RNA sequence: GGGAACGACUCGAGUAGAGUCGAAAAAUGGCACGAAGCGAUCGAAUGGCUGGAUAACGUAAGAGAGGUCAACCCAGAGCCCGUGAAAAGGCGAGCACACUGUCCGUACCGAGAUCCGACACAGGUACAGCAUAACCAGCUUCGGCUGGUUAUGCUGAAAAGAAACAACAACAACAAC
Reactivity to DMS in 0.01 (KOAc 150mM, MgCl2 10mM, bicine 150mM(pH8.5), 24C), signal-to-noise 2, nucleotides 027 to 126: a030u010g000g020c030a060c050g000a010a020g020c020g010a110u010c060g090a120a070u030g000g020c010u000g030g000a020u010a110a110c150g000u030a040a060g000a140g000a050g010g030u000c090a060a010c020c110c010a170g000a280g040c000c040c030g000u000g120a130a100a160a110g000g000c010g010a060g070c070a060c090a040c110u000g020u000c090c020g030u010a110c050c000g000a050g030a150u060c010c010g020a000c020a030c080a050g000g000u060a110

The record gives the reactivity of an RNA of 177 nucleotides to DMS. DMS adducts were read by reverse transcription with MarathonRT. For DMS, 1,325 sequencing reads were counted. The data come from the RNA Mapping Database (RMDB), library RFM100. The RNA was probed in 150 mM KOAc, 10 mM MgCl2 and 150 mM bicine (pH 8.5) at 24 C.